[RMDB]
Structure probing data (2A3) for a 177-nucleotide construct. 2A3 is a SHAPE reagent: it acylates the 2'-hydroxyl of flexible nucleotides of all four kinds.
RNA sequence: GGGAACGACUCGAGUAGAGUCGAAAAUGCGGCCCUAAUUUAUUCAGCACGCGACUGCCGCAUCCCGCACGGGAGGCGCAGCUGCUGCAUGACGCUUUAACGUCGCAGCUCACCACCGCCUGACCAUGGGCGGUCAAGCUUUCGAGCUUGACCGCCCAAAAGAAACAACAACAACAAC
Reactivity to 2A3 in 0.01 (KOAc 150mM, MgCl2 10mM, bicine 150mM(pH8.5), 24C), signal-to-noise 1, nucleotides 027 to 126: u100g000c000g000g000c030c030c020u050a000a110u140u300u300a130u080u070c170a010g000c010a020c190g000c000g060a060c000u040g000c120c020g000c040a040u000c000c000c000g000c000a000c000g000g000g000a010g000g110c010g000c000a090g080c000u080g000c000u040g000c000a010u220g000a000c040g000c110u140u030u040a150a130c090g000u000c000g060c000a000g000c000u000c000a060c080c120a070c000c000g000c000c020u000g090a130c000c000a000u030